[RMDB]
RNA sequence: GGGAACGACUCGAGUAGAGUCGAAAAUAGGCGUAUUCGGUGAUGGAAAUAUUUUAAAUCACGUUUUCCAGGAUUUAAACUUAUCACUGGACACUAGUUGCGUGCAAAAGCACGUAAACGAGGAAAAUUUCAUUACAAAUCUUUCGAACCAAAUUACGAAGUCACAAUUUUUCGAAAUUGUGACUUCAAAAGAAACAACAACAACAAC
Reactivity to DMS in 0.01 (KOAc 150mM, MgCl2 10mM, bicine 150mM(pH8.5), 24C), signal-to-noise 2, nucleotides 027 to 156: u010a080g030g020c080g000u000a070u000u000c000g010g020u010g010a070u000g030g000a130a090a240u010a060u010u000u010u000a000a040a030u000c020a100c020g030u000u000u040u000c220c060a190g020g030a050u010u000u000a020a040a070c160u000u000a090u010c020a020c000u010g010g010a040c090a020c030u000a070g030u000u000g000c010g000u000g010c000a050a170a070a300g010c000a010c010g040u000a010a020a050c050g020a240g000g000a040a030a040a090u000u000u000c010a080u030u000a190c080a040a040a050u000c030u010u010u000c040g000a070a110c020c010a030a070a130u000u000a110c180
Reactivity to 2A3 in 0.01 (KOAc 150mM, MgCl2 10mM, bicine 150mM(pH8.5), 24C), signal-to-noise 4, nucleotides 027 to 156: u170a010g050g000c040g030u070a090u020u070c040g030g000u020g020a010u040g010g070a050a070a060u130a130u060u150u030u090a030a100a050u090c040a040c120g020u060u010u130u020c020c020a010g000g010a000u010u030u100a050a090a080c060u110u140a000u030c030a020c180u010g000g010a000c010a020c080u040a020g030u010u020g000c010g010u000g000c000a030a120a300a130g000c010a000c010g010u010a080a070a010c040g010a070g040g060a020a080a010a040u090u120u060c020a040u030u150a030c020a050a140a080u030c040u010u090u070c030g030a070a050c010c050a070a080a070u130u150a050c080
An RNA of 207 nucleotides, treated with DMS and 2A3 and read out base by base.
The data come from the RNA Mapping Database (RMDB), library OK3TST.
The DMS profile rests on 2,668 reads.
For DMS the reverse transcriptase was MarathonRT.
The 2A3 profile rests on 2,917 reads.